[RMDB]
RNA sequence: GGGAACGACUCGAGUAGAGUCGAAAAACGUGCGAAAGCACGGUCAGCUCGUGAGGAUAUACAACACUGCUUCGGCAGUCUAUUAAGAUCACAUGAGGAUCACCCAUGUAGAAGGCACGAGCUGAUAAUGCGGAUACGUAUUCGUACGUAUCCGCAUAAAAGAAACAACAACAACAAC
Reactivity to 2A3 in 0.01 (KOAc 150mM, MgCl2 10mM, bicine 150mM(pH8.5), 24C), signal-to-noise 3, nucleotides 027 to 126: a020c010g000u000g000c020g090a170a010a000g020c000a000c010g000g010u000c000a000g000c000u000c010g000u000g010a030g050g070a100u020a000u020a140c050a070a010c020a000c030u010g000c000u040u030c060g110g000c010a000g020u020c020u070a150u100u170a140a060g010a060u030c010a000c030a140u180g060a160g160g000a040u100c040a110c070c010c000a010u050g000u010a050g020a150a020g050g000c000a000c020g000a000g000c010u000g000a000u000a000
Reactivity to DMS in 0.01 (KOAc 150mM, MgCl2 10mM, bicine 150mM(pH8.5), 24C), signal-to-noise 3, nucleotides 027 to 126: a140c000g040u000g010c000g010a140a110a160g010c000a000c020g010g020u000c000a020g000c000u010c000g050u000g000a000g010g010a130u010a080u000a010c030a040a120c290a020c000u000g020c010u000u010c210g010g010c000a000g000u000c050u010a050u010u020a050a050g000a040u000c010a020c060a110u000g010a140g010g000a060u010c080a180c030c040c030a070u000g010u000a030g000a100a240g000g010c000a030c010g000a010g000c000u010g000a010u000a040
An RNA of 177 nucleotides, treated with 2A3 and DMS and read out base by base. It was measured as part of the RMDB library OK2TRN. The RNA was probed in 150 mM KOAc, 10 mM MgCl2 and 150 mM bicine (pH 8.5) at 24 C.